[RMDB]
RNA sequence: GGGAACGACUCGAGUAGAGUCGAAAAGCCACAGCCGGAGCAGUACAUGUGGAACUUGUCGUUGCUGAAAACUCAGCGUGAUGGACGAGAGAUUUACGACAACUCCCAUCAUGGCGAUCAAAGCUAACCCUGGUACCGUCUUCGGACGGUACCAGGGAAAAGAAACAACAACAACAAC
Reactivity to 2A3 in 0.01 (KOAc 150mM, MgCl2 10mM, bicine 150mM(pH8.5), 24C), signal-to-noise 1, nucleotides 027 to 126: g160c030c000a000c060a050g010c000c000g000g290a050g030c000a000g010u130a010c000a050u240g000u090g120g060a090a020c040u080u000g010u020c130g000u000u010g040c070u060g040a090a020a030a030c160u070c020a040g000c000g000u050g080a130u130g000g030a000c060g000a040g000a000g000a120u100u110u260a140c130g060a000c080a080a100c110u000c050c000c000a000u110c000a000u000g060g000c000g000a000u190c040a020a060a000g020c000u000a040a100